[RMDB]
RNA sequence: GGGAACGACUCGAGUAGAGUCGAAAAUCAUACCAGAAUAGGAUUUUUAAACCAGAGUGGCACAGGCCACCACCAGACAGGUAGACAAUGCACAUCAGUACAGAAUUCGAUGCUGGCAAUAUAGAGCCCUUAUGUGCUUUUUCGAAAGCACAUAAGGAAAAGAAACAACAACAACAAC
Reactivity to DMS in 0.01 (KOAc 150mM, MgCl2 10mM, bicine 150mM(pH8.5), 24C), signal-to-noise 3, nucleotides 027 to 126: u010c030a100u000a140c070c060a070g020a140a170u000a200g010g010a000u000u010u000u000u020a050a090a160c090c040a120g000a120g020u000g020g020c030a110c140a090g010g020c030c010a030c020c030a070c070c050a080g000a080c150a040g000g040u000a070g020a050c040a070a030u000g020c010a040c050a070u000c050a040g010u000a080c090a060g000a040a120u020u000c040g010a090u000g000c020u010g000g010c040a050a070u000a080u000a070g010a100g000c160
Reactivity to 2A3 in 0.01 (KOAc 150mM, MgCl2 10mM, bicine 150mM(pH8.5), 24C), signal-to-noise 2, nucleotides 027 to 126: u030c010a040u080a120c020c020a020g080a040a070u100a080g040g010a050u080u020u000u050u220a150a090a020c050c010a030g070a040g110u050g010g000c030a050c090a180g250g000c000c000a010c000c020a020c000c000a020g070a150c020a030g020g020u040a010g020a020c030a100a080u090g020c050a010c000a090u060c000a030g000u050a060c000a020g100a070a100u070u050c010g010a020u070g050c040u020g070g050c020a100a000u100a030u020a150g130a020g050c000

Structure probing data (DMS and 2A3) for a 177-nucleotide construct. The DMS profile rests on 1,715 reads. For 2A3 the reverse transcriptase was SuperScript II with manganese. For DMS the reverse transcriptase was MarathonRT. The data come from the RNA Mapping Database (RMDB), library OK2TST. The RNA was probed in 150 mM KOAc, 10 mM MgCl2 and 150 mM bicine (pH 8.5) at 24 C. Reactivities are given for positions 27 through 126.